[RMDB]
This 177-nucleotide RNA was probed chemically with 2A3 and DMS. The reactions ran in a buffer of 150 mM KOAc, 10 mM MgCl2 and 150 mM bicine (pH 8.5), at 24 C. For DMS, 1,569 sequencing reads were counted.
RNA sequence: GGGAACGACUCGAGUAGAGUCGAAAAAGCGUCAAACAUCGAGCAUCGUGAUGCUAAGGCCGUGAAGCCGCCCUGAUCUCUUCGGAGUUGAGGGGAGUGGUGGAGCCGCCGGACCAAGCGGUUAGUAUGAUUCGCUCUUUUUCGAAAGAGCGAAUCAAAAAGAAACAACAACAACAAC
Reactivity to 2A3 in 0.01 (KOAc 150mM, MgCl2 10mM, bicine 150mM(pH8.5), 24C), signal-to-noise 1, nucleotides 027 to 126: a000g020c010g080u050c050a110a130a120c040a090u190c080g110a050g050c030a020u040c010g020u000g000a010u020g010c010u010a030a000g010g020c040c000g020u040g010a020a020g030c010c020g000c000c000c000u010g010a010u000c000u000c000u040u020c120g130g010a030g040u290u000g020a040g040g000g030g010a020g120u280g010g000u010g010g000a000g030c030c020g000c000c000g000g000a000c010c000a020a000g000c000g000g040u020u030a020g010u030a070
Reactivity to DMS in 0.01 (KOAc 150mM, MgCl2 10mM, bicine 150mM(pH8.5), 24C), signal-to-noise 3, nucleotides 027 to 126: a040g010c090g010u000c010a100a050a110c130a070u020c060g000a110g010c080a030u000c030g000u000g000a300u010g040c010u010a100a270g000g010c010c190g030u010g020a250a280g010c000c000g000c000c010c000u000g000a190u000c000u000c010u010u030c170g010g010a040g000u010u010g000a300g000g000g000g000a060g000u010g030g000u000g000g000a300g010c030c240g000c010c000g000g000a070c300c000a020a300g000c000g010g000u000u020a120g030u000a090

About this RNA: For 2A3 the reverse transcriptase was SuperScript II with manganese. Source: RMDB library OK2TRN, as collected in RNAgym.